[RMDB]
RNA sequence: GGGAACGACUCGAGUAGAGUCGAAAACAAUGAGCCUUGAUUACUUCAACAUGCUAGGAAAACAAACGCAGUAUAUUGAUAGCAAAAGGUCAACUAACAUUUUCUGCGGGUGUGUUAACUGCAGUCAGUCGACUAAUAGGUUCGCCUAUUAGUCGACAAAAGAAACAACAACAACAAC
Reactivity to DMS in 0.01 (KOAc 150mM, MgCl2 10mM, bicine 150mM(pH8.5), 24C), signal-to-noise 2, nucleotides 027 to 126: c130a060a140u000g000a150g020c000c010u000u010g000a100u000u020a070c080u000u030c060a060a030c070a080u000g000c050u010a050g000g000a070a090a100a100c170a070a050a110c050g000c020a000g010u000a020u000a140u000u010g000a080u000a000g020c130a140a090a130a090g010g010u000c130a110a090c080u040a050a130c060a040u020u000u000u000c000u000g000c050g000g000g000u000g000u000g000u020u000a030a090c050u000g000c030a030g000u000c120a130
Reactivity to 2A3 in 0.01 (KOAc 150mM, MgCl2 10mM, bicine 150mM(pH8.5), 24C), signal-to-noise 2, nucleotides 027 to 126: c020a000a150u240g030a020g000c030c060u070u050g070a070u030u220a080c030u050u060c040a020a020c000a080u050g000c000u090a040g080g040a140a100a030a000c040a030a060a010c070g040c070a030g050u040a040u000a000u090u080g020a040u030a040g030c040a080a080a120a000g110g000u040c020a010a030c040u070a050a000c000a080u050u040u070u080c000u000g000c010g000g000g050u090g000u040g050u060u030a120a040c010u010g000c000a020g050u140c020a010

Chemical mapping of a 177-nucleotide RNA with DMS and 2A3.
Reactivities are given for positions 27 through 126.
For DMS, 1,088 sequencing reads were counted.
DMS adducts were read by reverse transcription with MarathonRT.
It was measured as part of the RMDB library OK2TST.